[RMDB]
RNA sequence: GGGAACGACUCGAGUAGAGUCGAAAAAAACGGCAAACAACAAAACAACUACGCUUUAGCAGCUUAAUAACCUGCUUGCGUGCUCCUGCUUUGCAUCGCCCAUGUGCCAAGUUAGGGGCUCAACUUUAGUGGGCUACGCUGUCUAGUCUCCGCCUGACCGUGGAGUAUGCUUCGGCAUACUCCACGGAAAAGAAACAACAACAACAAC
Reactivity to 2A3 in 0.01 (KOAc 150mM, MgCl2 10mM, bicine 150mM(pH8.5), 24C), signal-to-noise 1, nucleotides 027 to 156: a000a000a000c120g010g010c030a040a080a050c010a150a100c020a070a210a040a050c060a030a000c010u130a050c060g000c000u240u060u000a010g000c000a000g020c010u060u000a100a000u040a150a020c000c000u000g020c000u010u040g030c010g010u000g000c010u010c000c010u000g000c000u040u000u000g000c010a000u060c000g000c000c000c000a000u040g000u000g000c000c020a020a020g000u150u150a010g160g000g040g000c010u030c050a050a100c030u160u080u070a070g000u020g040g000g030c010u030a030c080g080c070u040g000u080c040u040a050g050u000c040u070c020c020g110c000c020u070g060a090

Chemical mapping of a 207-nucleotide RNA with 2A3.
It was measured as part of the RMDB library RSTRND.
The 2A3 profile rests on 579 reads.